[RMDB]
RNA sequence: GGGAACGACUCGAGUAGAGUCGAAAACUUGUAACAGGCUCAAACUGGUUAACGGACUUGACAAAGCUUUGAUACCUACCAGGGGGUGAGAAGAGACAAGGGCGCUACCAGCUAGUUAAACCAACAGCAAAGCUUAUACUAAGUGCUGUGAACCAUCCCUAGAAGGUCAUUUCGAUGACCUUCUAGGAAAAGAAACAACAACAACAAC
Reactivity to 2A3 in 0.01 (KOAc 150mM, MgCl2 10mM, bicine 150mM(pH8.5), 24C), signal-to-noise 2, nucleotides 027 to 156: c010u040u110g030u020a100a030c050a080g040g040c000u020c090a120a020a020c030u030g020g010u040u060a060a000c010g000g030a060c030u050u050g040a080c080a060a100a010g010c000u110u020u060g060a050u150a100c000c000u040a060c030c070a030g090g000g000g020g030u030g010a110g000a040a000g030a010g000a040c010a040a060g030g020g000c010g040c000u000a020c030c000a030g030c010u040a000g000u020u040a080a060a060c100c020a020a030c000a010g000c030a050a060a020g030c040u080u080a110u080a210c110u070a070a080g020u040g090c010u000g020u040g050a010a010c030c000a060u100c030
Reactivity to DMS in 0.01 (KOAc 150mM, MgCl2 10mM, bicine 150mM(pH8.5), 24C), signal-to-noise 1, nucleotides 027 to 156: c060u000u000g020u000a170a100c070a060g020g000c000u000c080a050a100a160c030u000g020g000u010u010a030a090c120g000g030a030c080u050u020g000a190c140a090a160a140g050c050u030u000u010g000a300u000a100c020c030u000a240c190c000a260g050g010g000g000g030u050g010a230g000a100a120g020a190g030a170c000a070a070g050g010g020c040g000c030u000a070c010c010a060g010c030u000a010g020u020u050a020a090a070c140c020a110a040c010a100g000c000a040a070a110g050c020u000u000a120u010a090c060u000a150a120g000u010g000c010u000g000u020g020a090a060c050c080a030u000c020